[RMDB]
RNA sequence: GGGAACGACUCGAGUAGAGUCGAAAAGGACAUCGUAACAGAGCUUUAUAGAGAUGUUGUGAGGAUUAAAAUGGGUAAGUAUAAAAUUCUAAAAAGUGUCUGACAUAAAGCAAACUCUUCAUCAGGCCGUUCCAAAGACAUUCGUGUCUUUGGAACGAAAAGAAACAACAACAACAAC
Reactivity to 2A3 in 0.01 (KOAc 150mM, MgCl2 10mM, bicine 150mM(pH8.5), 24C), signal-to-noise 2, nucleotides 027 to 126: g030g000a030c000a150u040c050g040u010a080a000c070a130g130a010g010c050u060u080u220a050u170a030g060a000g010a080u060g010u020u000g040u070g030a090g000g000a050u050u100a010a020a060a110u080g000g080g000u110a060a030g040u010a060u120a010a180a070a010u010u020c030u100a110a000a000a000a130g030u010g020u020c000u000g000a000c000a160u180a060a020a000g040c080a000a010a070c030u110c050u090u190c030a040u010c000a030g030g000c030
Reactivity to DMS in 0.01 (KOAc 150mM, MgCl2 10mM, bicine 150mM(pH8.5), 24C), signal-to-noise 2, nucleotides 027 to 126: g020g000a070c090a000u010c070g010u030a100a070c160a040g010a120g010c020u020u000u000a060u020a020g000a120g030a070u040g000u010u000g010u000g000a120g020g000a060u000u000a050a080a070a110u050g000g010g040u020a020a090g000u010a100u000a030a040a040a050u020u000c030u110a050a020a110a130a000g010u010g000u000c010u000g020a100c150a070u020a020a020a120g000c060a060a000a090c090u000c020u020u000c080a110u010c010a030g000g020c100